[RMDB]
RNA sequence: GGGAACGACUCGAGUAGAGUCGAAAAUGAUCCAGAGUGCAGAAACCAAUUGGGGAGGAUGGCUCUGUGGUCACCUGGAGGACAUGCGUUCAAUCCCAAACCAUACAGUUUCUGUUGGCUGAAUGCAACCAUCCAUUUAAUUCGUUAAAUGGAUGGUAAAAGAAACAACAACAACAAC
Reactivity to DMS in 0.01 (KOAc 150mM, MgCl2 10mM, bicine 150mM(pH8.5), 24C), signal-to-noise 9, nucleotides 027 to 126: u010g000a040u000c010c000a020g010a060g020u000g020c030a040g010a190a150a090c020c030a170a170u000u010g020g010g010g010a100g010g010a300u000g000g000c020u000c020u000g010u010g020g010u000c020a060c060c030u000g010g010a100g010g010a090c160a090u010g010c020g030u000u000c030a050a160u000c020c010c010a080a080a140c030c020a040u010a060c090a040g010u000u010u010c030u000g010u000u000g000g000c090u000g000a030a020u000g010c060a090
Reactivity to 2A3 in 0.01 (KOAc 150mM, MgCl2 10mM, bicine 150mM(pH8.5), 24C), signal-to-noise 9, nucleotides 027 to 126: u060g010a010u000c000c010a000g010a010g020u200g300c020a010g030a080a050a040c010c020a100a260u300u260g150g020g020g020a070g050g020a040u020g010g000c010u000c010u020g120u160g020g000u020c010a020c020c020u040g050g050a060g030g040a020c020a070u070g010c030g010u010u030c020a060a110u080c020c010c000a020a020a020c070c010a090u150a150c030a040g020u020u060u090c020u040g060u030u020g030g000c030u030g040a040a010u060g010c010a010
An RNA of 177 nucleotides, treated with DMS and 2A3 and read out base by base. The RNA was probed in 150 mM KOAc, 10 mM MgCl2 and 150 mM bicine (pH 8.5) at 24 C. The data come from the RNA Mapping Database (RMDB), library OK2TST. The DMS profile rests on 25,254 reads. Values cover nucleotides 27 to 126.